RNA sequence: GGGAACGACUCGAGUAGAGUCGAAAAGGGAAAGUGCUGAGCACAGACACUUGUCCAGAUUCACUGACAACCUCAAACUUCAGCUGCCGCUCAUGGCACCAUUUCAGCGAAUGGGGUGGGAGGAAUAAUAUGUGCUACAUUUCGAUGUAGCACAUAUAAAAGAAACAACAACAACAAC
Reactivity to 2A3 in 0.01 (KOAc 150mM, MgCl2 10mM, bicine 150mM(pH8.5), 24C), signal-to-noise 6, nucleotides 027 to 126: g060g000g020a020a030a010g010u030g000c020u020g040a110g120c110a040c030a280g180a080c020a020c020u060u060g100u120c010c000a020g040a150u120u120c070a070c150u050g080a040c030a060a080c020c020u070c050a090a110a100c040u110u080c040a030g030c060u050g040c040c030g060c050u120c140a120u160g030g000c010a020c010c030a040u080u140u150c050a040g030c040g080a130a100u070g020g010g000g020u070g020g020g000a040g010g070a030a010u170a060
Reactivity to DMS in 0.01 (KOAc 150mM, MgCl2 10mM, bicine 150mM(pH8.5), 24C), signal-to-noise 8, nucleotides 027 to 126: g000g010g000a100a060a040g020u000g020c020u010g000a220g020c140a090c070a070g010a140c040a030c050u000u000g020u000c010c040a100g010a180u000u010c060a090c050u020g010a090c140a080a060c050c030u010c060a030a070a090c100u010u010c070a080g000c110u000g000c080c040g010c170u010c150a080u010g000g000c030a070c090c050a070u000u000u000c080a050g010c110g010a060a060u010g000g000g000g020u010g000g000g010a060g010g010a070a080u000a090
An RNA of 177 nucleotides, treated with 2A3 and DMS and read out base by base. The RNA was probed in 150 mM KOAc, 10 mM MgCl2 and 150 mM bicine (pH 8.5) at 24 C. The data come from the RNA Mapping Database (RMDB), library OK2TRN. The 2A3 profile rests on 5,923 reads.